[RMDB]
RNA sequence: GGGAACGACUCGAGUAGAGUCGAAAAGAUAUGGAGUAGCUAGACAUGCCUGUGGCUCGGAAACGAGUAUCAGGCAACAGCUAGGCUACUCCUAAGUCAAACCCUCAGCUCUUCGGAGCUGAGGGAACAUUAACUCAAUGUUCGCAUUGAGUUAAUGAAAAGAAACAACAACAACAAC
Reactivity to DMS in 0.01 (KOAc 150mM, MgCl2 10mM, bicine 150mM(pH8.5), 24C), signal-to-noise 8, nucleotides 027 to 126: g000a020u000a090u010g000g000a010g010u000a000g000c000u000a010g000a030c060a300u010g010c000c000u000g010u000g020g020c000u000c000g010g000a020a020a060c000g010a010g020u000a080u000c000a000g010g020c010a030a020c180a080g000c000u000a020g010g000c000u000a000c000u010c000c000u000a000a040g000u000c010a140a140a170c000c000c000u000c000a010g000c000u000c000u000u010c200g030g000a010g000c000u000g000a000g010g010g000a000a020
Reactivity to 2A3 in 0.01 (KOAc 150mM, MgCl2 10mM, bicine 150mM(pH8.5), 24C), signal-to-noise 9, nucleotides 027 to 126: g000a000u020a010u070g000g000a000g000u000a000g000c000u010a010g020a070c070a300u300g010c000c010u030g020u100g300g010c000u000c000g000g010a010a020a000c000g000a000g010u040a060u080c000a000g000g020c020a020a000c020a000g000c010u020a020g240g010c000u000a000c000u000c000c000u000a010a000g000u000c020a060a060a300c000c000c000u000c000a000g000c000u010c010u050u250c300g180g010a000g000c000u000g000a000g000g000g000a000a000
An RNA of 177 nucleotides, treated with DMS and 2A3 and read out base by base. For 2A3, 41,062 sequencing reads were counted. For 2A3 the reverse transcriptase was SuperScript II with manganese. It was measured as part of the RMDB library TTRDEL. Values cover nucleotides 27 to 126.